[RMDB]
This 177-nucleotide RNA was probed chemically with DMS and 2A3. For DMS, 2,173 sequencing reads were counted. The RNA was probed in 150 mM KOAc, 10 mM MgCl2 and 150 mM bicine (pH 8.5) at 24 C. It was measured as part of the RMDB library OK1LIB.
RNA sequence: GGGAACGACUCGAGUAGAGUCGAAAACAUGAUUGAAGCAGUUGAUAUGGAGGUAAUAUGAACAUCCACAGACAAGAUCCACUCUCCUACGCCGGAUGGCUCGCUUCUUGACUUGUCUGUGAGUGACAACACAUUGCUGCUUCGGCAGCAAUGUGUUAAAAGAAACAACAACAACAAC
Reactivity to DMS in 0.01 (KOAc 150mM, MgCl2 10mM, bicine 150mM(pH8.5), 24C), signal-to-noise 2, nucleotides 027 to 126: c080a100u010g000a180u020u000g010a000a040g000c030a160g010u000u020g000a140u030a070u010g000g000a050g010g000u020a100a120u070a070u000g020a080a170c220a000u040c060c000a030c000a000g000a000c010a000a020g000a080u000c070c080a100c210u000c090u000c010c010u000a050c100g020c000c000g000g050a100u060g020g030c030u000c240g000c000u000u000c000u000u000g000a090c030u000u000g000u000c010u000g010u000g000a070g000u010g000a090c160
Reactivity to 2A3 in 0.01 (KOAc 150mM, MgCl2 10mM, bicine 150mM(pH8.5), 24C), signal-to-noise 2, nucleotides 027 to 126: c020a120u120g050a120u160u040g010a010a020g040c000a000g010u110u090g030a190u080a110u200g120g000a000g090g100u040a090a120u100a170u170g100a100a050c040a120u030c050c000a000c000a000g000a000c010a000a000g030a130u060c040c010a000c020u150c000u000c010c010u050a090c060g040c010c010g200g110a150u270g050g000c000u000c070g000c000u000u000c000u000u070g000a050c000u000u000g000u000c040u000g000u050g000a030g080u060g050a040c030